[RMDB]
The record gives the reactivity of an RNA of 177 nucleotides to DMS and 2A3. The RNA was probed in 150 mM KOAc, 10 mM MgCl2 and 150 mM bicine (pH 8.5) at 24 C. Reactivities are given for positions 27 through 126. It was measured as part of the RMDB libraries RFM100 and RFMREP. High 2A3 reactivity points to a flexible backbone, as in loops and unpaired stretches. In probing experiments dimethyl sulfate is read out at A N1 and C N3, which are open when not base-paired.
RNA sequence: GGGAACGACUCGAGUAGAGUCGAAAAGCGGGGCUUGAAACGCGGGUAGCGCGCACGCCCGGCGAAGAAGUUCGCAUACGCGGUGUGCUGGUGCCGAAGUGUCUGCUGCAACGGCACGCUCGACACCAGGCUAUUAUUCCUUCGGGAAUAAUAGCCUAAAAGAAACAACAACAACAAC
Reactivity to DMS in 0.01 (KOAc 150mM, MgCl2 10mM, bicine 150mM(pH8.5), 24C), signal-to-noise 3, nucleotides 027 to 126: g020c050g000g000g000g010c050u010u020g030a090a080a120c060g000c030g000g010g050u030a040g000c030g010c080g020c080a090c110g000c000c000c030g010g030c000g000a020a040g000a170a090g000u010u020c030g010c020a060u010a300c170g000c070g020g020u010g000u010g030c020u010g000g000u010g030c050c000g010a020a150g000u010g010u000c050u010g000c030u010g000c150a140a180c100g000g000c020a000c030g020c070u000c000g000a040c010a030c010c010
Reactivity to 2A3 in 0.01 (KOAc 150mM, MgCl2 10mM, bicine 150mM(pH8.5), 24C), signal-to-noise 4, nucleotides 027 to 126: g030c070g010g010g010g000c040u070u060g060a070a080a020c070g000c030g020g020g050u140a050g060c080g010c010g000c040a000c040g000c000c000c000g000g000c010g010a010a020g060a080a010g200u040u030c020g000c010a010u050a220c090g010c090g050g010u050g010u010g020c040u080g000g010u000g000c030c010g020a090a030g020u030g000u070c110u080g100c060u120g000c050a100a050c040g020g000c010a000c020g040c060u000c000g020a020c000a020c010c000